Chemical mapping of a 177-nucleotide RNA with DMS and 2A3. Reactivities are rounded to 0.1 and cut off at 0 and 3. Conditions: 150 mM KOAc, 10 mM MgCl2 and 150 mM bicine (pH 8.5), 24 C.

[RMDB]
RNA sequence: GGGAACGACUCGAGUAGAGUCGAAAAGAAACAGGCGCCUGUAAACCGCACUCUAAACCAACAAAUAGAGGAAGAAACUGUUGUUACUAAAAGCAAGAGCGCCAUAAAGUAACAUAAGAAAACAAAAAUAUUAUCCAUAGUUCGCUAUGGAUAAUAUAAAAGAAACAACAACAACAAC
Reactivity to DMS in 0.01 (KOAc 150mM, MgCl2 10mM, bicine 150mM(pH8.5), 24C), signal-to-noise 2, nucleotides 027 to 126: g010a110a060a070c070a110g000g000c020g040c030c010u000g000u070a060a170a120c080c070g010c140a300c000u020c050u000a000a100a150c160c140a080a200c240a060a030a110u000a000g030a000g000g010a080a150g000a100a060a120c080u000g010u040u000g040u020u010a050c060u040a020a050a100a120g010c060a120a120g010a070g000c050g000c000c010a030u020a040a030a040g000u000a000a040c020a020u030a060a080g010a080a030a060a070c030a000a050a050a030
Reactivity to 2A3 in 0.01 (KOAc 150mM, MgCl2 10mM, bicine 150mM(pH8.5), 24C), signal-to-noise 3, nucleotides 027 to 126: g040a010a070a000c040a030g050g010c020g010c010c010u030g060u150a110a140a030c020c010g060c020a030c000u000c000u030a160a210a170c100c130a050a110c040a050a140a030u060a020g030a020g020g020a060a080g050a100a070a010c090u100g020u150u020g030u010u010a010c000u030a050a180a060a000g030c020a020a100g050a020g130c030g030c000c000a000u080a010a100a020g020u020a020a000c010a030u140a050a070g090a000a100a030a000c090a000a140a040a010
For 2A3 the reverse transcriptase was SuperScript II with manganese.